[RMDB]
RNA sequence: GGGAACGACUCGAGUAGAGUCGAAAACAGACUCGAGCGAAAGCUCGGCGAAAGCCGCGUACAUGUGAAUGUCGGCUGGUGUACAGUCGACAGUUACUCUUCGGAGUAACAAUAGAAACAACAACAAGAGUACUCAUAAUUUCGAUUAUGAGUACUCAAAAGAAACAACAACAACAAC
Reactivity to 2A3 in 0.01 (KOAc 150mM, MgCl2 10mM, bicine 150mM(pH8.5), 24C), signal-to-noise 9, nucleotides 027 to 126: c050a010g110a080c030u030c040g010a000g010c010g060a150a020a010g010c020u000c000g000g000c010g040a080a030a010g030c010c010g010c040g060u100a080c040a180u160g050u080g190a230a090u080g010u010c000g000g000c000u010g000g050u200g110u240a090c000a000g010u000c000g000a000c000a010g000u000u000a000c010u000c010u020u060c200g090g000a010g000u010a000a000c000a000a020u180a080g130a090a090a010c050a040a020c010a010a010c020a100a050
Reactivity to DMS in 0.01 (KOAc 150mM, MgCl2 10mM, bicine 150mM(pH8.5), 24C), signal-to-noise 7, nucleotides 027 to 126: c090a130g000a120c130u020c010g010a000g000c010g010a160a090a150g020c010u000c000g010g000c050g000a090a130a100g000c010c020g010c120g010u020a070c200a110u010g010u000g000a130a140u010g020u000c000g020g000c000u000g000g010u040g010u050a120c010a000g020u000c010g000a000c020a020g000u000u000a000c000u000c000u000u060c090g020g000a010g010u000a010a000c020a160a080u060a100g000a120a090a060c060a040a050c300a080a110c230a100a130
This 177-nucleotide RNA was probed chemically with 2A3 and DMS. The 2A3 profile rests on 16,220 reads. The RNA was probed in 150 mM KOAc, 10 mM MgCl2 and 150 mM bicine (pH 8.5) at 24 C. It was measured as part of the RMDB library OK1LIB. 2A3 adducts were read by reverse transcription with SuperScript II with manganese.